Structure probing data (DMS and 2A3) for a 207-nucleotide construct. The data come from the RNA Mapping Database (RMDB), library M2RFPK. The DMS profile rests on 3,559 reads. Conditions: 150 mM KOAc, 10 mM MgCl2 and 150 mM bicine (pH 8.5), 24 C.

[RMDB]
RNA sequence: GGGAACGACUCGAGUAGAGUCGAAAAGCCAUGAGUCGCAACGCAAAGCCGCGGCAAGUGGAGUAAGCGAGAAGAGACUAGGCUUUGGUUUCUUCAAGUGAAGCGGUCACCAAUCAGGUGUGGUAGUAGGAGCCUGCAUGGUUCGCCAUGCAGGCAAGGUAAUUAAGAAGUUCGCUUCUUAAUUACCAAAAGAAACAACAACAACAAC
Reactivity to DMS in 0.01 (KOAc 150mM, MgCl2 10mM, bicine 150mM(pH8.5), 24C), signal-to-noise 2, nucleotides 027 to 156: g020c000c010a020u000g000a300g030u000c000g020c000a040a060c020g000c010a190a200a210g020c020c030g040c000g040g010c040a040a300g020u000g020g010a100g020u010a080a260g000c040g010a300g010a040a030g000a030g010a020c000u000a070g040g000c120u000u010u000g030g020u000u010u000c010u000u000c010a020a300g000u010g020a090a130g020c050g010g000u010c000a130c020c010a020a120u010c110a060g010g000u000g030u000g000g000u000a060g020u020a070g000g000a120g010c010c010u000g000c000a010u010g010g010u010u000c300g020c040c000a020u000g000c000a030g010g010c000a010a000
Reactivity to 2A3 in 0.01 (KOAc 150mM, MgCl2 10mM, bicine 150mM(pH8.5), 24C), signal-to-noise 3, nucleotides 027 to 156: g030c010c000a040u040g020a020g000u020c010g000c030a060a080c060g030c080a200a200a030g060c090c040g000c020g010g000c030a020a050g000u010g010g010a050g030u070a050a060g020c060g020a030g000a050a020g030a020g000a010c010u040a070g100g140c040u120u100u110g020g010u030u010u000c000u000u000c020a040a020g020u010g070a090a010g000c040g030g030u070c010a010c050c010a050a130u180c060a100g010g030u030g010u040g080g030u040a070g030u030a070g080g170a050g020c010c000u010g000c000a000u000g010g000u000u040c080g050c050c010a000u000g010c000a000g000g000c000a000a000